Chemical mapping of a 177-nucleotide RNA with DMS and 2A3. For 2A3 the reverse transcriptase was SuperScript II with manganese. Reactivities are given for positions 27 through 126. For DMS the reverse transcriptase was MarathonRT.
RNA sequence: GGGAACGACUCGAGUAGAGUCGAAAAAAUGAGUCAAUGACAACAACAUCCUUGCUGAAAUUGAGACAGAGGCUGGCAGAGAAGAAAGGAGACUCCAAGAACAGUCAAGACACACCUCCAAAACCACCCAUGUUCCUUAUUUCGAUAAGGAACAUGGAAAAGAAACAACAACAACAAC
Reactivity to DMS in 0.01 (KOAc 150mM, MgCl2 10mM, bicine 150mM(pH8.5), 24C), signal-to-noise 3, nucleotides 027 to 126: a030a070u000g010a110g020u010c020a130a080u010g000a150c040a070a100c090a100a090c130a110u000c060c040u000u000g040c040u000g000a030a090a060u000u000g000a130g000a080c080a070g030a110g000g010c040u000g020g020c060a050g000a120g000a060a070g010a050a090a100g010g000a090g000a090c070u000c050c080a070a100g020a010a070c110a030g010u000c070a050a080g010a060c070a030c090a160c020c020u000c050c010a070a040a090a140c090c080a080c240
Reactivity to 2A3 in 0.01 (KOAc 150mM, MgCl2 10mM, bicine 150mM(pH8.5), 24C), signal-to-noise 2, nucleotides 027 to 126: a000a010u120g040a000g040u080c080a070a090u150g020a030c010a060a000c000a020a020c000a110u000c000c020u070u060g060c040u070g060a070a190a220u150u070g020a040g010a050c040a040g060a000g050g010c040u040g030g000c050a000g000a000g040a200a010g040a050a100a000g050g010a020g030a040c020u000c020c020a040a000g000a050a000c010a030g010u040c070a050a000g030a020c000a010c000a040c070c020u000c020c010a050a040a030a070c010c010a020c000

The reactions ran in a buffer of 150 mM KOAc, 10 mM MgCl2 and 150 mM bicine (pH 8.5), at 24 C. The DMS profile rests on 1,356 reads.